Source: RMDB library 15KREP, as collected in RNAgym. An RNA of 177 nucleotides, treated with 2A3 and DMS and read out base by base. For DMS, 17,864 sequencing reads were counted. The 2A3 profile rests on 21,264 reads.

[RMDB]
RNA sequence: GGGAACGACUCGAGUAGAGUCGAAAAGGCUUGUAUGGUUCAGGUUACCUGCGGUAGCAUGACUCUUAAUGGUCUUUGGCUUGACAACACAGUCUGGUGCCCACGACACGUAAUGUGCCCGGCUGACGAAAAUCAUAAAGUUCGCUUUAUGAUUUUCAAAAGAAACAACAACAACAAC
Reactivity to 2A3 in 0.01 (KOAc 150mM, MgCl2 10mM, bicine 150mM(pH8.5), 24C), signal-to-noise 7, nucleotides 027 to 126: g020g000c020u060u050g060u130a060u130g030g020u040u040c020a010g020g010u020u020a020c000c020u150g150c130g060g010u020a010g000c020a020u020g010a020c010u000c010u110u080a080a030u100g000g000u010c000u030u020u030g040g010c020u030u070g030a030c030a100a010c050a040c010a090g010u000c020u060g010g030u070g020c010c020c010a020c010g070a020c020a010c040g060u100a150a060u110g000u020g020c000c030c010g030g010c020u020g020a020c050
Reactivity to DMS in 0.01 (KOAc 150mM, MgCl2 10mM, bicine 150mM(pH8.5), 24C), signal-to-noise 9, nucleotides 027 to 126: g010g000c020u000u000g020u000a040u010g010g000u010u000c020a020g010g020u000u000a040c030c020u010g020c210g020g010u000a020g010c020a050u000g010a040c030u000c050u000u000a100a190u000g000g000u000c020u000u000u000g010g010c020u000u010g010a070c070a070a090c140a150c120a060g010u000c010u010g010g010u010g010c020c040c040a090c110g000a100c070a030c080g010u010a090a080u000g020u000g000c010c010c090g010g000c050u000g000a150c230